[RMDB]
Source: RMDB library M2PK50, as collected in RNAgym. An RNA of 177 nucleotides, treated with DMS and 2A3 and read out base by base. For 2A3, 1,593 sequencing reads were counted.
RNA sequence: GGGAACGACUCGAGUAGAGUCGAAAAGAGACGUUGUUCGCAACGUCUCGCAAUAUGCGGCGCUCGCGCGCCGGACUGAGAUCGUCGGGAUCCAGACCGACAACACCCAAGAAUUCGUUCUUGGGAAGCUUAUGGCUGAAUUCGUUCAGCCAUAAGCAAAAGAAACAACAACAACAAC
Reactivity to DMS in 0.01 (KOAc 150mM, MgCl2 10mM, bicine 150mM(pH8.5), 24C), signal-to-noise 2, nucleotides 027 to 126: g050a000g000a010c000g000u000u000g020u000u000c290g010c000a000a000c000g000u010c000u000c010g060c150a140a120u000a090u040g020c020g120g000c000g010c020u000c220g000c300g000c050g030c000c020g020g000a010c120u000g000a250g010a070u020c160g000u000c020g040g000g020a010u000c010c050a140g000a080c010c010g010a000c000a060a160c230a130c020c010c000a000a020g000a060a070u000u010c210g010u000u000c000u000u000g000g010g000a010a000
Reactivity to 2A3 in 0.01 (KOAc 150mM, MgCl2 10mM, bicine 150mM(pH8.5), 24C), signal-to-noise 2, nucleotides 027 to 126: g030a000g000a000c000g000u020u000g020u040u120c230g000c120a000a000c000g010u000c000u000c010g000c000a030a070u270a170u300g070c030g000g040c000g030c020u130c130g110c010g040c010g000c130c000g010g030a050c050u150g100a050g050a270u150c080g040u010c000g040g040g000a010u070c000c030a030g080a090c000c010g070a000c010a010a030c060a060c000c000c000a010a010g020a020a000u140u130c190g090u030u010c020u000u000g000g020g010a000a010